Source: RMDB library OK3TST, as collected in RNAgym. Structure probing data (2A3 and DMS) for a 207-nucleotide construct. Reactivities are given for positions 27 through 156.
RNA sequence: GGGAACGACUCGAGUAGAGUCGAAAAGGGCAGAAGCCGUCCAAUGACUUGCCAAGGAACCACUGUCGGUGCGUCUUCUGCAGGUCGCGGGCGGUGAAGUCAUUCACGAUGGUGUAGCCGAUGACAUGCUUGUACGCCUCUUCCUUGCGGAUCGCACCUUUGACCGAAUAUUCGUAUUCGGUCAAAGAAAAGAAACAACAACAACAAC
Reactivity to 2A3 in 0.01 (KOAc 150mM, MgCl2 10mM, bicine 150mM(pH8.5), 24C), signal-to-noise 4, nucleotides 027 to 156: g010g010g010c030a020g030a130a020g000c000c000g010u000c010c010a030a100u300g000a020c000u010u020g000c030c050a070a050g040g020a030a050c000c030a050c050u180g130u300c200g110g000u010g010c120g000u010c090u040u000c020u040g000c010a000g030g000u010c010g000c040g000g000g000c010g000g000u010g010a000a000g030u040c010a000u060u060c030a020c100g120a130u170g020g040u090g060u110a070g040c030c050g000a060u050g020a010c010a070u090g040c020u080u120g050u140a040c040g010c000c010u020c030u020u050c020c000u030u140g030c040g010g080a100u090c060g000c040a070c010
Reactivity to DMS in 0.01 (KOAc 150mM, MgCl2 10mM, bicine 150mM(pH8.5), 24C), signal-to-noise 2, nucleotides 027 to 156: g010g020g010c000a120g010a150a300g020c000c010g010u000c020c040a110a160u000g000a040c000u000u000g040c000c220a140a110g020g010a070a030c060c030a090c020u000g040u000c160g040g030u000g000c100g000u010c050u010u000c030u000g020c000a020g000g000u010c010g030c200g030g020g000c000g000g010u000g010a030a140g010u000c020a030u000u010c050a060c040g020a100u010g020g000u000g030u000a110g020c000c050g020a120u020g000a050c050a150u000g020c100u010u000g030u000a120c040g000c000c000u010c020u000u000c030c000u000u010g010c010g010g000a140u010c040g000c030a090c090